[RMDB]
RNA sequence: GGGAACGACUCGAGUAGAGUCGAAAAUAGUCCAGAGUUUGCAAGUGCUUGUGCCUCUGAACAGCCAAUGUUUUCUUGCCAUCUCCUUGCUGCCGCGGGCCACCCACUGGAACUUCCCACUGCCUGUGAUGCCCCGGCAGAAUUUUUGAAACUCCUAACUCGUAUAAUACUUCGGUAUUAUACGAGUAAAAGAAACAACAACAACAAC
Reactivity to DMS in 0.01 (KOAc 150mM, MgCl2 10mM, bicine 150mM(pH8.5), 24C), signal-to-noise 1, nucleotides 027 to 156: u010a100g040u000c050c030a100g030a120g010u010u000u000g010c020a050a030g020u000g030c060u000u030g020u010g010c170c010u030c060u000g020a060a140c220a150g010c030c040a060a130u000g040u000u000u000u000c030u010u010g000c040c020a110u000c030u000c020c050u010u000g030c010u000g020c020c010g010c180g060g040g040c010c030a070c020c010c000a060c030u000g000g000a060a060c110u000u000c040c000c030a160c080u000g020c000c020u010g000u010g000a130u000g000c030c010c000c040g010g090c010a050g010a020a000u000u000u000u020u010g010a160a040a100c070u000c010c010u010a260
Reactivity to 2A3 in 0.01 (KOAc 150mM, MgCl2 10mM, bicine 150mM(pH8.5), 24C), signal-to-noise 3, nucleotides 027 to 156: u110a010g080u060c030c000a010g020a000g020u070u140u030g010c010a050a040g020u040g040c010u040u020g110u160g080c000c020u090c130u180g060a100a030c030a020g010c000c030a000a040u120g050u030u140u040u030c030u030u040g040c000c020a070u040c030u020c040c030u030u160g050c000u000g000c010c020g030c220g010g000g000c040c020a030c020c020c000a020c030u040g030g040a100a060c020u070u060c030c020c010a020c060u110g030c000c000u010g010u030g010a050u070g030c000c000c010c000g020g000c000a000g010a020a010u030u040u000u040u060g060a060a050a060c040u070c080c030u100a020